Structure probing data (2A3 and DMS) for a 207-nucleotide construct. The DMS profile rests on 4,250 reads. Source: RMDB library OK3TST, as collected in RNAgym.
RNA sequence: GGGAACGACUCGAGUAGAGUCGAAAAGUGUUUGUAUGUUCAUAUGUACAAUGUACAUAUCCUCAUUAUUUGUGGAUUCUGUAUUUUCUAAAUCACCUCCUCACUAAAGUGUGUAUGUAAUCCCAAAUCAACACUCGCAGCACAUUUGCAAACAUCCAUGUCUAAUGAGGUUCGCCUCAUUAGACAUAAAAGAAACAACAACAACAAC
Reactivity to 2A3 in 0.01 (KOAc 150mM, MgCl2 10mM, bicine 150mM(pH8.5), 24C), signal-to-noise 6, nucleotides 027 to 156: g040u030g030u030u090u050g060u030a130u050g060u050u130c060a040u050a040u080g020u020a040c090a190a230u250g010u010a010c000a020u020a010u040c000c030u090c030a080u050u210a050u090u100u070g040u070g010g020a020u060u030c060u070g080u100a110u040u140u030u040c100u160a120a130a110u070c010a030c030c020u060c010c010u040c030a080c040u070a040a050a040g020u010g000u010g010u050a100u190g030u050a030a080u030c010c010c010a010a040a040u090c040a030a030c030a020c060u050c080g010c010a030g050c000a030c010a090u080u130u100g000c010a000a040a070c010a030u030c040c000
Reactivity to DMS in 0.01 (KOAc 150mM, MgCl2 10mM, bicine 150mM(pH8.5), 24C), signal-to-noise 2, nucleotides 027 to 156: g040u000g020u000u000u000g000u010a030u010g040u010u010c030a020u000a010u000g040u010a000c020a160a110u000g010u000a010c000a020u000a010u010c030c040u000c020a060u000u000a140u000u020u010g030u000g020g010a070u000u010c080u010g040u010a070u000u000u000u000c080u000a050a100a090u010c060a040c010c050u010c010c000u010c060a060c090u000a060a060a110g010u000g020u000g030u000a050u000g020u000a060a100u000c000c000c010a050a040a150u010c130a100a060c040a040c030u000c060g050c020a110g020c040a050c020a070u000u000u000g030c040a030a060a090c090a090u000c080c060
For 2A3, 3,210 sequencing reads were counted.